[RMDB]
This 177-nucleotide RNA was probed chemically with DMS and 2A3.
For 2A3, 2,248 sequencing reads were counted.
RNA sequence: GGGAACGACUCGAGUAGAGUCGAAAACGUUCAGUAAGGAAAGUGGAUGUACGCGCCAUGACAGAUCCGCAGACGCAGAGCACCAGGGUCGGGGUGGUUGCCGAGUCGGGGCCCGACGAACGACGGGGCCCCGCUGUCGUUUCGACGACAGCGGGGCAAAAGAAACAACAACAACAAC
Reactivity to DMS in 0.01 (KOAc 150mM, MgCl2 10mM, bicine 150mM(pH8.5), 24C), signal-to-noise 3, nucleotides 027 to 126: c020g000u010u000c040a110g000u010a070a090g000g020a060a190a100g000u000g020g010a040u030g060u020a070c080g020c060g000c000c000a100u000g010a080c080a120g000a010u000c010c050g000c060a070g000a090c120g070c060a040g030a100g000c060a040c030c050a120g000g010g010u010c030g000g000g000g040u000g030g030u000u020g010c040c030g000a150g010u000c010g010g030g000g000c010c000c010g000a130c070g020a090a030c100g000a050c070g030g000g020
Reactivity to 2A3 in 0.01 (KOAc 150mM, MgCl2 10mM, bicine 150mM(pH8.5), 24C), signal-to-noise 3, nucleotides 027 to 126: c030g000u030u030c050a060g040u140a130a040g080g070a150a140a030g030u060g040g050a100u040g030u080a050c060g010c000g000c030c000a020u050g070a080c020a050g060a080u000c000c000g010c010a000g010a040c020g020c100a030g010a030g070c040a030c030c020a040g060g020g040u050c040g060g000g000g000u030g000g050u020u070g010c020c000g000a020g000u040c050g020g000g030g000c010c020c010g070a070c010g000a160a010c030g110a010c020g000g000g090